[RMDB]
RNA sequence: GGGAACGACUCGAGUAGAGUCGAAAAAAUCGCCGCUGCAUCGGCGCACUUGAUGACCGAAUUGGUGUAUCGCUAUCUCGACACCGAAGCGAUCGCGGUCGUGCAGGGCGAUGGUGCGGUGAGUCAGGUUCUUCCAGGGCUUCGGCCCUGGAAGAACAAAAGAAACAACAACAACAAC
Reactivity to 2A3 in 0.01 (KOAc 150mM, MgCl2 10mM, bicine 150mM(pH8.5), 24C), signal-to-noise 2, nucleotides 027 to 126: a000a030u060c010g010c000c000g090c010u000g000c000a000u000c000g000g000c000g000c020a230c070u090u060g040a000u070g000a020c030c000g150a200a190u170u210g120g000u080g020u170a000u000c010g100c040u060a300u220c120u100c130g230a160c080a090c160c130g010a080a020g000c070g000a000u050c050g010c000g080g010u010c010g000u080g050c000a000g020g000g120c000g010a010u000g010g000u010g000c000g000g000u020g000a040g000u020c110a100g140